RNA sequence: GGGAACGACUCGAGUAGAGUCGAAAAGCAUUGUGCAUCAUGAUCCCCAGUGAACUUGUUAAAAAUGCAGAUUGGUUGCCUUUUGAGGUUUUGAUUUAGUAGGGAUAUGAUUUUUAACAAGCAUCCAAAUGAUUUUGGUGUAGGUGGUUUGAGGACCAGUCUUGCUGUAUUUCGAUACAGCAAGACUAAAAGAAACAACAACAACAAC
Reactivity to 2A3 in 0.01 (KOAc 150mM, MgCl2 10mM, bicine 150mM(pH8.5), 24C), signal-to-noise 3, nucleotides 027 to 156: g030c040a050u090u100g080u140g090c020a020u060c000a000u080g050a060u050c050c030c000c010a010g020u040g170a040a060c030u020u030g010u020u040a020a010a000a030a010u130g060c000a010g030a140u090u130g040g050u090u090g020c030c000u100u130u120u170g140a050g000g060u070u080u110u130g070a040u080u100u080a040g040u040a030g000g080g000a050u000a060u100g040a030u050u000u000u020u020a010a000c000a000a010g030c010a030u030c020c000a030a040a060u160g030a040u050u020u030u060g030g000u020g030u040a060g010g080u030g020g090u050u060u070g070a020g030g020a000c020c020
Reactivity to DMS in 0.01 (KOAc 150mM, MgCl2 10mM, bicine 150mM(pH8.5), 24C), signal-to-noise 2, nucleotides 027 to 156: g030c050a080u010u000g030u020g030c020a050u010c010a050u010g000a100u000c020c020c000c050a160g010u010g010a130a070c040u000u000g000u000u000a010a030a020a050a020u000g040c070a070g020a170u000u010g020g010u000u000g010c050c030u000u010u000u000g030a090g000g010u020u010u000u000g010a130u000u000u000a130g000u000a110g010g000g010a110u000a050u000g000a040u010u010u000u000u000a020a050c030a010a080g020c010a070u000c020c020a000a020a060u010g000a090u000u000u000u000g010g000u010g020u000a090g030g020u000g000g020u000u010u000g010a170g010g020a090c050c060
An RNA of 207 nucleotides, treated with 2A3 and DMS and read out base by base. Source: RMDB library OK3TST, as collected in RNAgym. For 2A3, 1,816 sequencing reads were counted.